RNA sequence: GGGAACGACUCGAGUAGAGUCGAAAAACGGGCAGUGGCGAUGGCAACGCGGCAGCCGCAGGGUCGACUUCUUCGCAGCCGCAACAGACGGGGGACGGGCAAAGAGGGGUACUCGUUCUGUUGGAAGCACUGAUAGGCCUUUCGAGGCCUAUCAGUGAAAAGAAACAACAACAACAAC
Reactivity to DMS in 0.01 (KOAc 150mM, MgCl2 10mM, bicine 150mM(pH8.5), 24C), signal-to-noise 1, nucleotides 027 to 126: a100c100g030g000g050c040a030g000u000g000g000c010g120a030u000g010g000c030a070a150c080g020c020g020g000c000a050g000c110c040g020c130a020g000g000g000u010c010g000a060c110u020u000c010u000u000c160g020c000a130g000c050c040g000c040a160a000c100a040g000a050c120g000g070g000g000g000a120c070g000g030g000c130a000a050a040g000a070g010g000g000g000u040a110c040u000c010g010u000u000c010u010g000u080u000g000g000a060a060g000
Reactivity to 2A3 in 0.01 (KOAc 150mM, MgCl2 10mM, bicine 150mM(pH8.5), 24C), signal-to-noise 4, nucleotides 027 to 126: a000c010g020g000g040c040a060g020u060g090g010c050g030a110u090g030g020c040a050a060c090g010c010g060g000c010a020g060c010c040g040c030a050g040g040g000u120c050g040a090c030u060u040c020u020u050c070g010c040a040g020c010c000g000c000a000a030c010a030g020a010c010g010g000g000g000g040a030c040g040g000g010c030a070a090a000g050a060g000g030g010g010u060a060c040u040c020g030u120u010c030u040g040u010u000g010g030a060a020g010